[RMDB]
RNA sequence: GGGAACGACUCGAGUAGAGUCGAAAAUGUCGCCGAGCAGAUCGACCAACGAGUCGGAGCCGGUUUCCGUCGCGGUCUCGGCGGCUGUGGCGAGCACAUCCCGCGGCAACUCGUCCGGGUCGGUUGCAUCCUCAGUCAGGUUCGCCUGACUGAGGAUAAAAGAAACAACAACAACAAC
Reactivity to DMS in 0.01 (KOAc 150mM, MgCl2 10mM, bicine 150mM(pH8.5), 24C), signal-to-noise 1, nucleotides 027 to 126: u010g000u000c000g010c030c000g000a020g000c170a260g000a050u000c040g020a020c000c060a170a150c060g030a010g000u000c090g000g000a180g000c000c020g000g020u000u010u000c050c010g020u000c000g000c010g000g000u010c000u000c030g000g000c010g000g000c010u000g020u000g000g000c010g000a040g000c040a150c180a100u000c030c040c030g030c040g010g010c050a110a030c020u000c020g000u000c080c070g010g010g000u000c050g030g000u000u010g050c090
Reactivity to 2A3 in 0.01 (KOAc 150mM, MgCl2 10mM, bicine 150mM(pH8.5), 24C), signal-to-noise 2, nucleotides 027 to 126: u200g020u090c000g000c020c000g000a030g000c060a020g040a060u060c010g010a010c020c000a010a020c020g050a020g020u060c050g100g040a060g020c040c030g040g000u030u050u040c050c000g000u010c000g000c030g050g030u000c030u020c070g040g020c020g000g000c010u000g000u010g000g020c010g000a040g060c050a050c010a160u090c030c020c000g070c020g010g020c020a010a030c000u000c000g010u020c020c070g040g000g020u010c010g040g000u020u020g000c000